[RMDB]
RNA sequence: GGGAACGACUCGAGUAGAGUCGAAAAGUGAAUGCUUCAUUCGAAUUUGAUGAGAUUCCCAUUAAAGAUGGGGGCUACCAGCGGUUGUGGGAUAGCAGGAUGAGGAAGAAGUUCCUACCUGCCAUUCUAUUAUCGUAAACUUCGGUUUACGAUAAUAAAAAGAAACAACAACAACAAC
Reactivity to DMS in 0.01 (KOAc 150mM, MgCl2 10mM, bicine 150mM(pH8.5), 24C), signal-to-noise 9, nucleotides 027 to 126: g020u010g010a080a050u000g010c090u010u010c060a080u010u000c040g020a120a130u010u010u010g010a080u000g010a110g010a190u000u000c010c000c010a090u000u010a080a090a110g010a080u010g010g010g010g000g010c080u000a080c050c040a070g010c100g010g010u000u000g020u000g010g010g010a020u000a040g010c000a010g000g010a120u010g010a030g010g010a020a020g000a130a100g000u000u000c000c000u000a060c010c000u000g010c010c030a020u000u000c030
Reactivity to 2A3 in 0.01 (KOAc 150mM, MgCl2 10mM, bicine 150mM(pH8.5), 24C), signal-to-noise 4, nucleotides 027 to 126: g110u090g060a100a060u130g080c080u110u140c030a070u070u090c040g070a200a170u140u100u170g040a060u080g030a020g020a080u100u000c020c010c010a020u090u240a210a150a020g150a050u050g010g000g010g020g010c010u040a060c040c010a020g010c040g080g010u040u080g030u070g020g020g010a010u030a020g000c020a010g040g040a080u180g090a070g050g010a030a010g050a060a040g060u010u020c000c000u000a020c000c000u030g000c030c000a010u030u000c010

Record summary: An RNA of 177 nucleotides, treated with DMS and 2A3 and read out base by base. The RNA was probed in 150 mM KOAc, 10 mM MgCl2 and 150 mM bicine (pH 8.5) at 24 C. It was measured as part of the RMDB library OK2TRN. For 2A3, 4,050 sequencing reads were counted.